[RMDB]
This 177-nucleotide RNA was probed chemically with 2A3 and DMS.
Source: RMDB library TTRDES, as collected in RNAgym.
RNA sequence: GGGAACGACUCGAGUAGAGUCGAAAAGAUAUGGAACGGUUGGGAGUAAGCAGGUCGGAAACGACCUGUAGUUACUUUGAUCAACCCGUUCCUAAGUCAAAUCCUGUCUCCUUCGGGAGACAGGAAACCCCUCCAUAAAGUUCGCUUUAUGGAGGGGAAAAGAAACAACAACAACAAC
Reactivity to 2A3 in 0.01 (KOAc 150mM, MgCl2 10mM, bicine 150mM(pH8.5), 24C), signal-to-noise 1, nucleotides 027 to 126: g000a000u010a020u060g000g010a030a000c000g000g000u030u020g010g000g000a050g030u000a040a000g000c010a000g000g010u010c010g000g040a000a020a000c010g010a000c000c030u010g010u000a010g010u000u050a010c010u300u300u050g010a010u000c000a010a010c070c040c000g000u010u010c000c000u000a000a010g000u000c000a020a060a200u030c020c000u000g000u000c000u020c010c000u040u080c210g190g000g010a020g020a000c010a010g020g070a010a000a010
Reactivity to DMS in 0.01 (KOAc 150mM, MgCl2 10mM, bicine 150mM(pH8.5), 24C), signal-to-noise 1, nucleotides 027 to 126: g000a030u010a010u010g000g000a000a040c030g000g000u010u000g000g000g000a000g030u000a030a120g020c000a010g000g000u010c000g030g010a000a010a020c010g000a000c000c000u000g030u010a030g010u000u000a000c000u010u010u020g000a010u030c010a010a010c140c070c180g000u000u000c000c000u000a000a060g000u000c000a160a150a170u020c000c000u000g000u000c000u000c000c000u000u030c250g010g030g010a040g010a000c000a000g010g010a000a090a170
For DMS the reverse transcriptase was MarathonRT. The RNA was probed in 150 mM KOAc, 10 mM MgCl2 and 150 mM bicine (pH 8.5) at 24 C.